[RMDB]
Notes: Structure probing data (DMS and 2A3) for a 207-nucleotide construct. The data come from the RNA Mapping Database (RMDB), library OK3TST.

RNA sequence: GGGAACGACUCGAGUAGAGUCGAAAAAGGCCUUAUGGGGCGUUUAAACCCUUUCCCUUAAAAUGCUCAAGGCCAGUGGUUAAAAGGGUAUCCUGGGACCUUCCUGUCUUCUUAGGCUCUAUCAUGUGUAAACAGUCACACAAGCUAUUGUGAUAAAUGUAGGAAAUCAUUUCGAUGAUUUCCUACAAAAAGAAACAACAACAACAAC
Reactivity to DMS in 0.01 (KOAc 150mM, MgCl2 10mM, bicine 150mM(pH8.5), 24C), signal-to-noise 1, nucleotides 027 to 156: a060g000g000c000c010u010u000a170u000g050g020g030g060c010g030u010u030u000a070a120a060c030c020c000u000u000u000c000c000c030u000u030a060a040a070a060u010g020c040u010c040a000a030g000g000c010c010a100g030u000g020g030u000u000a030a110a080a110g000g010g040u000a050u000c020c030u000g000g000g000a060c040c010u000u000c060c030u010g000u000c020u030u010c050u050u010a100g010g000c030u010c010u000a070u010c060a080u000g000u010g000u000a090a150a090c080a220g010u000c010a090c040a040c080a050a150g050c030u000a020u000u000g000u000g000a200u000a080a080a190
Reactivity to 2A3 in 0.01 (KOAc 150mM, MgCl2 10mM, bicine 150mM(pH8.5), 24C), signal-to-noise 2, nucleotides 027 to 156: a010g040g010c010c000u010u000a150u150g020g000g000g030c050g010u040u010u230a140a110a080c000c010c000u020u020u030c020c010c000u060u060a190a150a060a070u160g000c000u020c090a040a010g000g000c000c020a020g010u090g020g020u060u080a000a150a120a130g020g030g010u050a040u200c000c030u010g020g040g010a040c000c000u050u060c020c010u050g020u030c020u080u000c000u070u150a050g060g000c010u000c010u030a080u090c060a140u130g080u000g000u070a060a140a090c050a090g010u050c000a000c010a030c000a040a070g020c040u230a100u190u120g020u010g050a050u020a180a110a030